[RMDB]
Source: RMDB libraries RFM100 and RFMREP, as collected in RNAgym. An RNA of 177 nucleotides, treated with 2A3 and DMS and read out base by base. In probing experiments dimethyl sulfate is read out at A N1 and C N3, which are open when not base-paired.
RNA sequence: GGGAACGACUCGAGUAGAGUCGAAAAUAGGUAGGUGCGUAACCUUAAAAUCCGUGAAGCCGUCCGUGUCUGAUUAAGGUACUGAUUGUGAUGACGAUAGUAAGUCAGCAGGUGGAAGCACUUGUACGAGCCGUAUAUCAUUCGUGAUAUACGGCUCAAAAGAAACAACAACAACAAC
Reactivity to 2A3 in 0.01 (KOAc 150mM, MgCl2 10mM, bicine 150mM(pH8.5), 24C), signal-to-noise 4, nucleotides 027 to 126: u060a040g040g080u010a020g000g000u000g040c030g060u050a060a050c000c000u000u010a040a060a010a000u040c020c000g000u030g080a040a020g010c040c000g000u010c030c040g010u010g020u030c030u010g100a180u200u150a060a010g050g000u030a030c010u050g040a120u030u090g030u050g040a040u100g010a010c020g000a010u020a080g130u060a120a060g010u030c060a010g000c010a020g000g020u020g030g020a070a030g050c010a010c020u040u060g020u040a030c050
Reactivity to DMS in 0.01 (KOAc 150mM, MgCl2 10mM, bicine 150mM(pH8.5), 24C), signal-to-noise 4, nucleotides 027 to 126: u010a040g010g020u000a060g010g020u000g010c080g020u020a090a060c040c010u010u000a030a050a100a070u010c040c030g010u010g000a100a160g020c020c030g000u000c000c050g000u000g010u010c010u000g000a120u030u020a060a040g020g030u000a040c020u010g000a070u000u010g000u000g020a090u000g000a050c050g010a110u010a090g000u010a070a150g020u000c030a060g020c020a030g010g030u000g000g000a120a090g000c010a020c020u010u010g010u020a090c170